This 177-nucleotide RNA was probed chemically with DMS and 2A3.
For 2A3, 13,387 sequencing reads were counted.
It was measured as part of the RMDB library TTRDEL.
The reactions ran in a buffer of 150 mM KOAc, 10 mM MgCl2 and 150 mM bicine (pH 8.5), at 24 C.
[RMDB]
RNA sequence: GGGAACGACUCGAGUAGAGUCGAAAAGAUAUGGAUAUACUAUGGGAGCGUACGGAUCGGAAACGAUCCGAACGCGAAGAACAACAAUGUAUAUCCUAAGUCAAAGAAUGGAGUUCGCUCCAUUCAAGUAUAUAAUUCACUUCGGUGAAUUAUAUACAAAAGAAACAACAACAACAAC
Reactivity to DMS in 0.01 (KOAc 150mM, MgCl2 10mM, bicine 150mM(pH8.5), 24C), signal-to-noise 5, nucleotides 027 to 126: g010a000u000a010u010g000g000a010u000a000u000a010c000u000a160u000g010g000g000a050g030c000g020u000a040c000g000g000a000u000c000g000g000a000a000a020c000g010a010u000c000c000g000a020a000c010g010c000g020a130a090g010a150a120c120a030a060c000a040a300u000g000u000a000u000a000u000c000c000u000a000a090g000u000c000a070a120a120g000a010a000u000g010g010a010g020u000u010c240g010c000u000c000c000a010u000u000c010a050a120
Reactivity to 2A3 in 0.01 (KOAc 150mM, MgCl2 10mM, bicine 150mM(pH8.5), 24C), signal-to-noise 3, nucleotides 027 to 126: g010a010u010a010u040g000g000a000u000a000u000a030c070u060a240u210g060g000g100a260g020c010g000u010a020c000g010g000a010u000c000g000g000a000a010a000c000g010a010u000c010c000g000a000a000c010g000c020g000a020a020g080a080a050c070a000a000c000a010a060u080g000u010a000u000a000u010c000c000u000a000a000g000u010c040a150a070a140g010a010a000u010g010g000a010g020u080u120c190g110c140u000c000c000a000u000u010c000a000a000